[RMDB]
RNA sequence: GGGAACGACUCGAGUAGAGUCGAAAAUCACAACCUCAUCGUGAAUGAAGAUACUGCCGCUAUUGCGAAAGAUAUCAUCAAACACGUUGGUGUUGCGAUCGUCGCCGUUAGCGGAUCCAUCAUCACGUUCAAGACGCUUAGCCAGAUGGCCGUCAUCGGUCUCCCUGAAAUUCGUUUCAGGGAGACCAAAAGAAACAACAACAACAAC
Reactivity to 2A3 in 0.01 (KOAc 150mM, MgCl2 10mM, bicine 150mM(pH8.5), 24C), signal-to-noise 1, nucleotides 027 to 156: u010c000a020c000a010a010c000c000u010c000a040u000c010g000u000g020a000a000u000g040a010a090g030a020u000a020c000u010g100c000c000g010c040u150a220u300u300g010c020g050a020a060a000g020a060u060a030u000c010a000u010c060a000a020a010c010a010c050g040u030u010g000g000u000g000u020u030g030c010g000a000u040c010g160u040c050g050c080c000g050u070u110a040g020c040g050g010a060u050c030c000a000u040c000a040u130c000a010c020g010u130u080c130a150a010g070a010c030g090c020u090u040a040g090c140c040a030g010a100u050g020g000c000c000g010u040c010a000u190c030